[RMDB]
Structure probing data (2A3 and DMS) for a 207-nucleotide construct.
Reactivities are given for positions 27 through 156.
The RNA was probed in 150 mM KOAc, 10 mM MgCl2 and 150 mM bicine (pH 8.5) at 24 C.
2A3 adducts were read by reverse transcription with SuperScript II with manganese.
RNA sequence: GGGAACGACUCGAGUAGAGUCGAAAAACAGGAAAAAGGAGUUUAAAUUAGAUUUGCAAACGGACGGUACUAAAUACCGUCACUUUUACGUCUAACUUAUCGUUAACUCUGCAAAAAGAAAACAAGAAAAACAAGCGUGAGUUCGCUCACGCUUGAAGUACUGUUAUGUCUUCGGACAUAACAGUACAAAAGAAACAACAACAACAAC
Reactivity to 2A3 in 0.01 (KOAc 150mM, MgCl2 10mM, bicine 150mM(pH8.5), 24C), signal-to-noise 3, nucleotides 027 to 156: a000c020a010g040g050a040a030a040a070a020g060g010a010g000u010u040u070a040a060a040u030u020a010g010a030u040u020u270g020c050a020a030a030c020g020g000a000c000g000g000u020a030c050u250a120a110a140u060a010c000c000g000u000c000a040c000u000u010u010u060a010c020g000u000c000u010a010a040c030u070u060a050u210c040g070u030u030a010a010c000u020c010u060g000c090a090a070a060a010a030g070a020a040a020a000c080a030a070g150a080a100a010a000a010c000a000a000g000c000g000u000g000a020g010u010u130c180g030c070u000c000a000c000g000c000u000u000g000a000a000
Reactivity to DMS in 0.01 (KOAc 150mM, MgCl2 10mM, bicine 150mM(pH8.5), 24C), signal-to-noise 1, nucleotides 027 to 156: a040c050a100g010g020a020a040a100a120a130g010g010a020g010u000u000u000a000a000a100u000u000a050g010a000u010u000u000g120c030a040a000a040c160g020g020a010c000g020g020u000a030c090u000a060a090a300u000a000c000c020g010u000c000a020c010u000u010u020u000a020c020g000u000c000u000a000a010c000u000u000a090u000c170g030u000u020a030a020c010u000c020u000g000c160a030a040a020a090a100g000a050a070a050a100c010a070a110g000a030a110a040a170a050c050a010a060g040c000g040u000g000a040g050u000u000c300g000c000u000c000a000c000g000c010u000u010g000a020a030